[RMDB]
RNA sequence: GGGAACGACUCGAGUAGAGUCGAAAACUCGCGCGAACAUAGAGGCGUGGAGCGCGACAUGAAUCAGCCUCCAUUAGAUUAAUGGUCGACAGAUCAGCGGCGAUCAGCGACCAAAUUAGAAGCCGCCACCGGAAGAGGAGACGCUCGACGGACGUCAAAUAUAUACGCUCUUCGGAGCGUAUAUAUUAAAAGAAACAACAACAACAAC
Reactivity to DMS in 0.01 (KOAc 150mM, MgCl2 10mM, bicine 150mM(pH8.5), 24C), signal-to-noise 1, nucleotides 027 to 156: c060u000c040g040c000g000c000g000a060a200c050a160u000a120g000a080g050g030c010g010u010g060g020a300g040c050g000c010g070a090c130a100u000g000a130a130u000c040a190g020c000c000u010c040c010a150u000u000a150g000a230u020u000a040a210u010g040g000u000c000g040a100c050a100g020a080u000c010a080g000c000g020g020c070g020a100u000c010a130g010c020g000a050c000c010a020a060a100u000u000a120g000a090a240g020c000c000g020c020c040a160c030c000g030g010a090a080g010a210g000g000a140g000a000c040g010c020u000c020g010a110c050g020g000a090c020g000u000c020a040
Reactivity to 2A3 in 0.01 (KOAc 150mM, MgCl2 10mM, bicine 150mM(pH8.5), 24C), signal-to-noise 1, nucleotides 027 to 156: c010u020c000g020c000g000c000g020a230a000c080a090u090a050g030a050g010g000c040g000u000g040g020a020g000c070g000c000g000a030c070a150u300g090a130a160u100c030a040g000c050c000u040c040c010a050u080u220a050g070a090u060u210a230a050u100g000g000u030c020g030a200c070a160g000a000u000c060a060g000c000g160g000c060g010a030u040c020a000g000c000g010a010c020c000a020a020a020u090u040a020g020a090a050g020c020c020g010c000c030a030c010c020g050g010a060a000g000a060g000g030a090g020a080c030g030c040u000c010g020a020c030g000g040a050c000g000u010c000a000